[RMDB]
RNA sequence: GGGAACGACUCGAGUAGAGUCGAAAAGUGCCUCGUCGGCCCGGCAUGCCAACCUGAUCCGAAGUUCAACGUGGUUUCUCUGGCCUUCCAGAGAGAUGCGCGUCGGAAGAACCGACGAACAAACCUUAAAACAAAACGACGUUCGCGUCGUUUUGAAGCAGAUCACUAUGUUCGCAUAGUGAUCUGCAAAAGAAACAACAACAACAAC
Reactivity to 2A3 in 0.01 (KOAc 150mM, MgCl2 10mM, bicine 150mM(pH8.5), 24C), signal-to-noise 2, nucleotides 027 to 156: g050u050g060c030c020u030c020g000u030c020g000g020c000c010c000g000g040c020a050u150g080c030c040a090a130c010c060u110g050a100u050c020c030g030a140a040g070u080u090c030a070a020c040g030u090g010g000u020u040u000c000u000c000u000g010g020c040c090u300u130c000c000a020g000a000g000a000g000a000u200g100c030g000c020g000u040c030g010g020a030a030g020a060a080c020c000g020a010c010g020a050a010c040a030a070a070c000c020u140u280a060a070a010a080c020a000a030a000a000c000g000a000c010g010u000u130c230g010c000g080u000c000g000u000u000u000u000g000a000a000